Record summary
An RNA of 177 nucleotides, treated with DMS and 2A3 and read out base by base. Values are in units of 0.01, from 0 to 300, in steps of 10. 2A3 adducts were read by reverse transcription with SuperScript II with manganese. The 2A3 profile rests on 5,320 reads. The RNA was probed in 150 mM KOAc, 10 mM MgCl2 and 150 mM bicine (pH 8.5) at 24 C. Reactivities are given for positions 27 through 126. The data come from the RNA Mapping Database (RMDB), library OK1LIB.

RNA sequence: GGGAACGACUCGAGUAGAGUCGAAAAGAUCCGCAGCCGGACCUGAUUGCUUAUACAACGAGGCACUGCAACAUCUCUGUAGAACAGCGCUGAAUGUUGUUCUGAGGCUAUUCAAUGAGAGCCUACGCAUAUGUGCCUUCUUCGGAAGGCACAUAUGAAAAGAAACAACAACAACAAC
Reactivity to DMS in 0.01 (KOAc 150mM, MgCl2 10mM, bicine 150mM(pH8.5), 24C), signal-to-noise 5, nucleotides 027 to 126: g000a060u020c050c040g030c090a130g010c070c030g000g000a060c080c020u010g000a060u010u010g020c090u020u020a050u030a110c090a080a070c090g010a110g000g000c020a060c050u030g000c060a090a060c130a080u020c040u010c030u020g000u030a060g010a060a090c050a020g000c050g000c080u010g020a110a100u020g010u000u000g000u000u010c050u030g030a030g000g000c000u000a030u010u000c170a180a120u040g020a150g000a080g010c000c010u020a060c180g000
Reactivity to 2A3 in 0.01 (KOAc 150mM, MgCl2 10mM, bicine 150mM(pH8.5), 24C), signal-to-noise 8, nucleotides 027 to 126: g050a060u020c000c030g010c030a010g040c060c040g090g020a100c010c010u070g060a170u090u080g050c030u110u100a090u050a160c070a120a020c060g020a040g040g000c010a030c040u050g020c030a050a050c030a170u060c050u000c010u100g060u080a020g010a060a010c010a050g010c050g010c110u120g070a110a070u130g000u010u000g000u000u000c020u040g030a030g000g000c010u080a080u110u150c130a110a140u290g040a140g010a010g110c000c000u050a070c090g000